[RMDB]
RNA sequence: GGGAACGACUCGAGUAGAGUCGAAAAUCACUAAAAACCAAUUCCGACAGGCUUUGAAGCAUGCAAAUGUCACUAAUAUUAAUAAACUAUCGAAGGAACAAUUUCUUUCUAUUUUCAAUAGUUACAACCAUUUAAUCAUGUUCGCAUGAUUAAAUGGAAAAGAAACAACAACAACAAC
Reactivity to DMS in 0.01 (KOAc 150mM, MgCl2 10mM, bicine 150mM(pH8.5), 24C), signal-to-noise 2, nucleotides 027 to 126: u020c100a030c050u080a000a050a080a070a110c040c050a100a070u010u010c060c030g040a100c170a080g000g000c080u020u030u020g000a040a060g000c020a040u010g020c110a020a050a040u010g010u000c040a080c070u020a050a070u000a050u040u010a040a090u050a050a040a010c060u040a010u000c050g020a010a030g020g020a040a070c200a020a110u000u000u000c030u010u000u000c030u000a030u000u000u000u000c070a010a020u010a020g000u010u000a010c130a020a070
Reactivity to 2A3 in 0.01 (KOAc 150mM, MgCl2 10mM, bicine 150mM(pH8.5), 24C), signal-to-noise 9, nucleotides 027 to 126: u090c020a040c130u190a070a030a050a050a060c050c010a060a110u120u040c030c020g040a030c030a060g050g050c040u100u100u240g070a070a010g040c030a030u130g020c020a080a080a110u110g020u040c010a010c060u080a020a160u080a060u290u120a090a140u150a130a100a020c030u040a020u070c050g010a030a000g010g020a030a040c070a160a160u090u130u010c000u010u040u000c020u030a140u040u110u010u040c040a070a030u030a060g020u040u050a050c030a050a050